Chemical mapping of a 177-nucleotide RNA with 2A3 and DMS. The DMS profile rests on 15,453 reads. As a SHAPE reagent, 2A3 marks flexible, mostly unpaired nucleotides at the ribose 2'-OH. The 2A3 profile rests on 16,140 reads.

RNA sequence: GGGAACGACUCGAGUAGAGUCGAAAAGUGCCCUAUUCGGAGCACUGCAGUUCCCGAUAGAAAGGCUAAGCACUUCGCAAUGAAGUAAGGUGGGACUUUUCCUUCGGGAACCAAGCGGUUGGUUCCGGUAUUAACUACUGUUCGCAGUAGUUAAUACAAAAGAAACAACAACAACAAC
Reactivity to 2A3 in 0.01 (KOAc 150mM, MgCl2 10mM, bicine 150mM(pH8.5), 24C), signal-to-noise 8, nucleotides 027 to 126: g130u110g100c010c000c000u060a150u050u170c020g000g010a010g020c000a000c010u010g010c000a000g000u000u000c000c000c010g000a000u010a020g010a000a020a010g070g010c150u180a000a070g050c010a020c040u010u010c020g030c180a200a300u300g010a040a000g020u100a040a110g160g020u070g020g040g140a300c010u010u010u010u010c000c000u010u010c010g000g000g010a010a000c010c000a080a030g010c010g030g030u070u120g090g030u030u000c000c000g000
Reactivity to DMS in 0.01 (KOAc 150mM, MgCl2 10mM, bicine 150mM(pH8.5), 24C), signal-to-noise 8, nucleotides 027 to 126: g010u000g010c020c010c010u000a140u010u020c050g010g000a030g020c010a030c010u010g010c030a150g010u000u000c000c000c000g000a020u000a070g000a020a020a020g000g010c030u010a110a190g010c070a070c000u000u000c010g010c170a150a120u010g000a030a020g000u000a090a070g010g010u000g010g010g010a110c010u000u000u000u000c000c020u000u000c010g010g000g000a010a010c000c060a070a110g010c020g010g000u000u000g030g020u000u000c000c000g010